[RMDB]
RNA sequence: GGGAACGACUCGAGUAGAGUCGAAAAUCCGCUGCCGAGAUGACGGAAGACGAACUGGUCCGGGCCAUGGAAGUUAUCGACGGUGCGGUCAGUAAAGCGCUUGGCGAACGGGAAGAACGCUGGCGUAAACACUGGGCGGAGGCAGAGGAACGCGACCGUACGCUAAAACAUUCGUGUUUUAGCGUACAAAAGAAACAACAACAACAAC
Reactivity to 2A3 in 0.01 (KOAc 150mM, MgCl2 10mM, bicine 150mM(pH8.5), 24C), signal-to-noise 2, nucleotides 027 to 156: u060c010c030g000c060u040g020c020c000g120a080g050a090u060g010a060c000g070g030a020a030g100a070c130g010a130a070c030u060g010g040u090c020c030g080g100g000c030c040a040u070g100g120a080a070g040u060u080a060u150c070g130a100c050g140g000u050g110c000g000g020u010c000a020g000u030a030a050a080g010c040g000c090u090u220g040g000c000g000a050a000c020g020g070g110a100a030g040a060a020c030g000c040u020g030g010c000g000u000a000a050a000c050a010c010u050g000g060g010c040g010g030a030g000g000c010a000g000a030g050g000a090a010c040g000c060g080a010c000c110

Conditions: 150 mM KOAc, 10 mM MgCl2 and 150 mM bicine (pH 8.5), 24 C. This 207-nucleotide RNA was probed chemically with 2A3. Reactivities are rounded to 0.1 and cut off at 0 and 3. For 2A3, 1,141 sequencing reads were counted. Reactivities are given for positions 27 through 156.